Overview:
Chemical mapping of a 207-nucleotide RNA with DMS and 2A3. The DMS profile rests on 3,327 reads. The reactions ran in a buffer of 150 mM KOAc, 10 mM MgCl2 and 150 mM bicine (pH 8.5), at 24 C. Reactivities are given for positions 27 through 156. Source: RMDB library OK3TST, as collected in RNAgym.

RNA sequence: GGGAACGACUCGAGUAGAGUCGAAAAUAGGCGAACGAGAGGCCCUCUCGUGUGCGGAGUUGUCACGCUGACAAAAUUGUUAUGAUGUCCGAUUCCGGUAGCAUCGCGGCGAUGUUUUCAUAGGACAUCUUAUGAACCCAAGAGCUUCGGGGAAGCAACGUAAUCCGUAGUUCGCUACGGAUUACGUAAAAGAAACAACAACAACAAC
Reactivity to DMS in 0.01 (KOAc 150mM, MgCl2 10mM, bicine 150mM(pH8.5), 24C), signal-to-noise 2, nucleotides 027 to 156: u010a150g000g020c020g010a030a040c080g000a090g000a080g060g000c030c060c010u000c020u020c030g020u000g030u000g020c010g010g000a140g010u000u010g010u000c000a150c100g000c030u000g030a150c050a040a060a090a130u000u000g020u000u000a050u010g050a010u000g000u000c000c000g010a220u020u000c090c070g000g000u000a040g040c020a040u000c030g010c160g050g000c160g010a050u000g010u000u000u000u000c050a080u000a080g040g010a010c010a040u000c010u010u010a010u000g000a080a150c030c010c000a050a080g010a190g000c040u000u010c030g020g010g020g000a100a080g010c030a120
Reactivity to 2A3 in 0.01 (KOAc 150mM, MgCl2 10mM, bicine 150mM(pH8.5), 24C), signal-to-noise 2, nucleotides 027 to 156: u130a000g030g000c080g020a050a000c000g000a000g000a020g110g270c020c010c010u030c000u000c000g020u050g010u030g030c040g050g040a040g000u090u140g040u070c020a010c120g030c050u070g050a070c090a000a120a000a030u070u100g060u070u080a130u190g040a000u020g000u000c000c000g080a140u060u170c130c060g030g050u010a020g000c040a000u020c060g050c120g250g060c160g000a000u000g010u010u050u000u070c060a050u050a030g000g020a010c000a000u010c020u000u040a030u000g080a030a070c030c020c000a060a060g120a010g050c000u070u030c020g070g000g030g030a000a000g070c040a000